[RMDB]
RNA sequence: GGGAACGACUCGAGUAGAGUCGAAAAGGGCGAUAGUUCGCUAUCGCCCAAAUCUAAAACGUAUGUUAAGCUUGAUACGGAAAAACGAGCAAAAAGAAUAAGAAAUCAGCCGCUUCGGCGGCUGAAAGUACAUAGUAUUCUUCGGAAUACUAUGUACAAAAGAAACAACAACAACAAC
Reactivity to 2A3 in 0.01 (KOAc 150mM, MgCl2 10mM, bicine 150mM(pH8.5), 24C), signal-to-noise 2, nucleotides 027 to 126: g000g010g000c010g000a000u000a010g030u050u060c140g020c120u010a000u000c000g000c000c010c000a000a000a020u000c000u020a000a000a010a060c020g030u020a020u100g060u070u120a140a010g030c000u020u020g020a010u050a050c030g150g090a030a020a020a050a000c010g010a010g000c030a000a070a130a030a000g160a090a070u190a130a040g060a100a100a060u030c000a000g010c000c010g040c040u020u050c230g120g010c000g040g000c010u000g000a010a010a000
Reactivity to DMS in 0.01 (KOAc 150mM, MgCl2 10mM, bicine 150mM(pH8.5), 24C), signal-to-noise 2, nucleotides 027 to 126: g000g020g010c010g020a010u000a010g020u000u000c210g050c000u000a000u000c010g010c000c000c000a000a020a040u010c040u000a090a050a070a240c010g000u010a000u000g000u010u000a140a150g020c010u000u000g000a040u000a030c010g010g000a030a020a040a040a050c030g000a010g040c010a020a100a080a070a120g000a100a120u030a080a120g000a080a110a100u000c000a000g000c000c030g040c000u000u010c180g030g030c000g000g010c000u020g000a010a000a050
Structure probing data (2A3 and DMS) for a 177-nucleotide construct.
Values are in units of 0.01, from 0 to 300, in steps of 10.
2A3 is a SHAPE reagent: it acylates the 2'-hydroxyl of flexible nucleotides of all four kinds.
The RNA was probed in 150 mM KOAc, 10 mM MgCl2 and 150 mM bicine (pH 8.5) at 24 C.